[RMDB]
RNA sequence: GGGAACGACUCGAGUAGAGUCGAAAAAGAUCGCCGCAUUACGAUGCGGCGAUCAACAGGCGUAAAGGCUUGUCAAAUAGCGUGUUAAUAGCUUUGCUUUUGGCCGGGCGAGUGGUUAGUGAAUCAACUUAAGUUCAGAGUUCGCUCUGAACUUAAGAAAAGAAACAACAACAACAAC
Reactivity to 2A3 in 0.01 (KOAc 150mM, MgCl2 10mM, bicine 150mM(pH8.5), 24C), signal-to-noise 3, nucleotides 027 to 126: a000g010a000u000c000g000c000c000g040c070a000u060u080a040c300g070a040u000g010c000g000g000c000g000a000u000c000a000a000c020a000g020g000c050g110u210a150a090a040g130g020c000u010u030g080u050c040a020a040a180u130a100g010c050g000u070g090u210u130a110a130u050a140g030c000u090u070u130g020c000u000u170u110u130g020g000c040c000g010g040g000c010g010a040g000u060g090g040u100u080a070g000u030g150a080a110u070c040a020a020
Reactivity to DMS in 0.01 (KOAc 150mM, MgCl2 10mM, bicine 150mM(pH8.5), 24C), signal-to-noise 3, nucleotides 027 to 126: a050g000a010u000c020g030c000c000g030c020a020u000u010a130c180g020a070u000g040c000g040g030c030g010a000u000c000a060a020c040a040g000g000c050g040u010a100a080a130g000g020c000u010u010g020u010c100a090a050a080u020a100g010c060g010u000g010u000u000a070a070u010a120g000c070u010u000u010g020c010u000u000u020u000g010g000c020c050g020g000g030c040g010a070g000u010g000g000u010u000a060g010u000g000a070a140u010c060a060a130
The data come from the RNA Mapping Database (RMDB), libraries RFM100 and RFMREP.
Chemical mapping of a 177-nucleotide RNA with 2A3 and DMS.
The RNA was probed in 150 mM KOAc, 10 mM MgCl2 and 150 mM bicine (pH 8.5) at 24 C.
Reactivities are given for positions 27 through 126.